The record gives the reactivity of an RNA of 177 nucleotides to 2A3 and DMS. For DMS, 1,926 sequencing reads were counted. The 2A3 profile rests on 1,291 reads. 2A3 adducts were read by reverse transcription with SuperScript II with manganese.
RNA sequence: GGGAACGACUCGAGUAGAGUCGAAAAAUCAUGACGAAGAAAGGACGAGAGCAAGCUGAGAGGCAAGCUGAGAGGCAAGCUCAAAGAAAGGAGCGUCCAUCUCCUUACCCUCGUCUUUUAAAAAGAACUUAUAGGGUAACUUCGGUUACCCUAUAAGAAAAGAAACAACAACAACAAC
Reactivity to 2A3 in 0.01 (KOAc 150mM, MgCl2 10mM, bicine 150mM(pH8.5), 24C), signal-to-noise 1, nucleotides 027 to 126: a040u150c060a040u140g060a040c050g000a020a150g060a150a010a000g010g000a000c020g000a000g000a000g060c030a130a000g030c070u060g020a010g000a020g070g090c020a000a010g020c010u010g030a040g000a040g030g000c040a080a060g000c020u000c060a110a120a000g210a070a080a030g080g010a010g030c020g020u030c020c010a210u000c000u000c000c000u040u020a030c000c020c000u010c010g010u010c000u050u020u010u000a070a160a030a000a010g040a120a020
Reactivity to DMS in 0.01 (KOAc 150mM, MgCl2 10mM, bicine 150mM(pH8.5), 24C), signal-to-noise 3, nucleotides 027 to 126: a080u010c050a070u010g020a140c110g000a150a090g010a020a010a020g010g010a000c020g010a020g000a040g000c040a030a070g010c130u010g030a120g030a160g020g020c110a040a200g010c020u000g000a180g000a120g010g010c020a170a240g000c000u000c010a060a100a180g000a120a140a080g010g000a020g010c070g010u010c050c050a130u000c000u000c000c000u000u000a080c020c000c000u000c010g000u000c000u000u000u000u010a030a050a060a130a070g000a080a180